[RMDB]
RNA sequence: GGGAACGACUCGAGUAGAGUCGAAAACAAAAAGGUUAACGAGCGUAAUCUGGGAGAUGUAAAAGGAGUUGACAUCUCCUAGAACACCGAAAGGUGGCGGACCGUUAACGGCAUCUUUCGAAAGAAACCCUAUAUGAGGCUUCGGCCUCAUAUAGGGAAAAGAAACAACAACAACAAC
Reactivity to 2A3 in 0.01 (KOAc 150mM, MgCl2 10mM, bicine 150mM(pH8.5), 24C), signal-to-noise 1, nucleotides 027 to 126: c070a000a000a120a000a000g110g000u010u000a000a000c000g030a030g080c080g040u070a000a170u000c000u030g000g000g000a000g000a000u020g000u090a040a030a110a090g250g080a120g040u120u090g060a000c010a000u000c000u000c000c000u000a000g010a000a000c010a000c000c000g050a030a030a000g040g000u020g010g040c000g000g030a050c020c000g000u040u060a000a030c000g100g050c020a070u010c030u020u090u060c080g170a100a040a040g060a030a080a060
Reactivity to DMS in 0.01 (KOAc 150mM, MgCl2 10mM, bicine 150mM(pH8.5), 24C), signal-to-noise 2, nucleotides 027 to 126: c030a040a120a010a080a130g020g000u000u000a000a030c010g000a030g000c010g010u030a050a040u010c000u030g000g020g020a040g010a030u000g010u000a030a040a120a040g040g040a300g000u000u080g020a070c050a000u000c000u000c010c000u010a000g000a020a300c040a030c030c000g000a140a040a090g000g030u000g030g000c050g020g000a160c060c050g020u000u000a000a010c010g050g000c190a030u010c110u000u020u030c060g000a080a090a110g000a040a110a060
Source information:
Structure probing data (2A3 and DMS) for a 177-nucleotide construct. Values are in units of 0.01, from 0 to 300, in steps of 10. DMS adducts were read by reverse transcription with MarathonRT. The data come from the RNA Mapping Database (RMDB), library OK1LIB.